This 177-nucleotide RNA was probed chemically with DMS and 2A3. 2A3 adducts were read by reverse transcription with SuperScript II with manganese. It was measured as part of the RMDB library OK1LIB. The RNA was probed in 150 mM KOAc, 10 mM MgCl2 and 150 mM bicine (pH 8.5) at 24 C.
RNA sequence: GGGAACGACUCGAGUAGAGUCGAAAAGAGCUCGACCAUGCAGGUUAGAUAUGGGAAGAGCUAUAAUUGACUGUAUGUCUGUGAAUGUGCUUCGAGAAGCACGGUACAGAGAUUACGGCUACCUGCAACUCACUUACCGGUUCGCCGGUAAGUGAGUAAAAGAAACAACAACAACAAC
Reactivity to DMS in 0.01 (KOAc 150mM, MgCl2 10mM, bicine 150mM(pH8.5), 24C), signal-to-noise 2, nucleotides 027 to 126: g010a000g000c000u020c020g000a300c060c030a070u000g000c000a080g000g040u000u030a050g000a040u060a060u010g040g000g030a140a140g000a010g010c000u000a030u010a020a040u020u020g040a190c030u020g010u010a000u000g000u000c020u000g000u000g030a120a110u030g030u000g020c010u020u000c200g000a130g000a100a010g000c000a000c000g040g030u010a000c000a000g000a080g000a060u010u010a000c020g000g010c030u010a010c010c030u000g000c030a180
Reactivity to 2A3 in 0.01 (KOAc 150mM, MgCl2 10mM, bicine 150mM(pH8.5), 24C), signal-to-noise 4, nucleotides 027 to 126: g120a010g000c000u010c020g020a010c000c010a010u020g000c000a010g040g000u150u240a040g100a200u160a050u120g040g000g010a190a010g020a080g000c000u000a000u070a050a090u070u160g070a070c000u000g000u060a040u020g110u020c000u000g040u000g090a270a200u120g010u010g000c010u030u070c090g200a150g060a120a000g000c000a000c000g000g000u090a000c000a000g000a000g030a080u070u140a000c000g010g030c000u030a030c000c000u000g000c000a010